[RMDB]
The record gives the reactivity of an RNA of 207 nucleotides to 2A3. Conditions: 150 mM KOAc, 10 mM MgCl2 and 150 mM bicine (pH 8.5), 24 C.

RNA sequence: GGGAACGACUCGAGUAGAGUCGAAAAUGGCUUCUCCUGGGCGAUCGCUCGCUGCUUUUGUGGCUGGCUUUCAGCGGGCUGGAGGAGCCGGGAGCGGAGGCGGAGGACCGAGCCAAAAACGUCAGCCUAUAGAGGAAGCUGUUCGCAGCUUCCUCAACGAUCUAAGACAUUUCGAUGUCUUAGAUCGAAAAGAAACAACAACAACAAC
Reactivity to 2A3 in 0.01 (KOAc 150mM, MgCl2 10mM, bicine 150mM(pH8.5), 24C), signal-to-noise 1, nucleotides 027 to 156: u080g010g000c010u010u020c000u000c000c000u050g050g100g030c090g070a120u130c080g030c000u000c010g000c000u000g010c000u080u090u060u200g060u040g030g010c040u000g010g000c000u040u080u080c000a000g000c000g000g020g040c000u070g010g010a000g020g010a010g000c000c000g000g010g000a020g000c070g010g060a060g010g010c100g040g030a020g020g010a020c020c040g020a020g040c010c040a110a060a000a010a010c090g020u010c010a000g000c010c010u120a150u080a090g010a000g010g010a010a000g000c000u010g020u080u090c220g000c080a000g000c000u000u000c000c000u010c000a000a000